[RMDB]
RNA sequence: GGGAACGACUCGAGUAGAGUCGAAAAUGCUGAUCUGGCUGAUCGACACCGGUCGGGUCAAGGCACCGAAGACGCUGACCGUGUUCUACGCAGACACCCGCCAGGAACUGCCACCGCUGGCCAUCGCGGCGCACCAAAUCAUGGAUGAACUGCAGGACAGUCGCGCACGAUUCGUCGUGCGCGACUGAAAAGAAACAACAACAACAAC
Reactivity to 2A3 in 0.01 (KOAc 150mM, MgCl2 10mM, bicine 150mM(pH8.5), 24C), signal-to-noise 1, nucleotides 027 to 156: u090g010c050u030g010a130u000c050u030g120g000c060u040g020a140u020c040g010a060c010a000c010c050g030g000u000c040g000g000g000u030c110a210a210g090g010c150a020c050c010g080a070a080g020a030c080g010c300u010g000a010c000c030g000u010g020u060u030c020u060a050c110g000c060a000g010a040c050a030c020c000c030g000c010c010a030g010g020a120a060c050u060g020c000c080a080c000c040g050c070u060g050g080c010c010a070u070c020g000c030g030g040c030g000c020a060c020c000a000a150a100u240c030a040u090g030g010a000u060g000a040a070c000u020g030c050a020g080g020a040